[RMDB]
RNA sequence: GGGAACGACUCGAGUAGAGUCGAAAAAGUCACCAGUAUACGUACUGGUGACAAUGGGUUGCUCUCUCGACUUAUUUUUGAAAAGGAGAGACAGAAAAUGGAGUCCUCCAUCUACGGAUGGAGGACAUGUAACGGGAACUUUCGAGUUCCCGUUACAAAAAGAAACAACAACAACAAC
Reactivity to DMS in 0.01 (KOAc 150mM, MgCl2 10mM, bicine 150mM(pH8.5), 24C), signal-to-noise 3, nucleotides 027 to 126: a100g010u000c000a010c010c000a010g010u010a010u030a110c240g070u010a000c020u000g010g020u000g010a000c010a000a040u030g020g000g010u020u000g000c110u010c010u010c000u000c000g000a210c040u000u030a060u000u040u010u050u070g000a030a080a030a040g000g010a060g000a020g020a080c300a060g020a040a030a030a130u020g010g020a130g000u000c010c000u010c000c000a010u000c000u000a080c190g040g000a010u000g000g000a000g010g000a010c020a000
Reactivity to 2A3 in 0.01 (KOAc 150mM, MgCl2 10mM, bicine 150mM(pH8.5), 24C), signal-to-noise 3, nucleotides 027 to 126: a000g000u000c000a000c000c000a000g000u000a010u000a050c270g000u000a000c010u000g000g000u010g000a000c000a000a020u020g040g000g000u050u050g010c050u010c000u010c000u040c010g080a070c040u160u090a150u150u220u050u070u130g280a170a150a030a000g050g000a000g010a010g020a000c000a010g200a030a110a000a000u130g130g020a100g030u000c000c010u000c000c000a000u000c010u030a060c300g100g000a000u000g010g000a000g030g000a000c000a000